Chemical mapping of a 177-nucleotide RNA with 2A3 and DMS.

[RMDB]
RNA sequence: GGGAACGACUCGAGUAGAGUCGAAAAGAUAUGGAGAUCAUCGAUCGAUGGGAUCGAAGUAUCUCGGAAACGAGAGUACGUAGUCAUCGGGAGAUCUCCUAAGUCAAAACCGAAGUUCGCUUCGGAAGUAAUUCGGGAGGUUCGCCUCCCGAAUUACAAAAGAAACAACAACAACAAC
Reactivity to 2A3 in 0.01 (KOAc 150mM, MgCl2 10mM, bicine 150mM(pH8.5), 24C), signal-to-noise 1, nucleotides 027 to 126: g000a000u020a030u240g010g000a000g010a010u030c080a060u180c130g130a040u110c030g040a000u040g140g000g260a190u290c050g010a080a010g030u000a030u070c000u000c000g000g080a060a050a080c030g000a010g010a010g140u160a000c040g000u040a010g040u010c000a000u010c030g000g000g000a020g010a010u030c000u000c000c000u010a060a000g010u040c050a000a000a090a180c010c000g010a000a010g000u030u250c300g000c100u000u000c000g020g060a020a010
Reactivity to DMS in 0.01 (KOAc 150mM, MgCl2 10mM, bicine 150mM(pH8.5), 24C), signal-to-noise 1, nucleotides 027 to 126: g020a090u000a300u020g030g010a010g000a000u000c010a250u020c150g020a090u020c030g000a050u000g000g010g000a020u020c100g000a080a300g000u000a090u010c000u010c000g000g000a060a150a140c000g000a010g000a020g020u010a000c000g000u010a270g060u000c020a020u000c010g000g000g000a090g000a020u000c000u000c000c000u000a000a180g020u020c020a090a030a060a180c000c000g010a010a000g000u000u000c170g030c000u000u010c030g000g000a020a090
For DMS the reverse transcriptase was MarathonRT.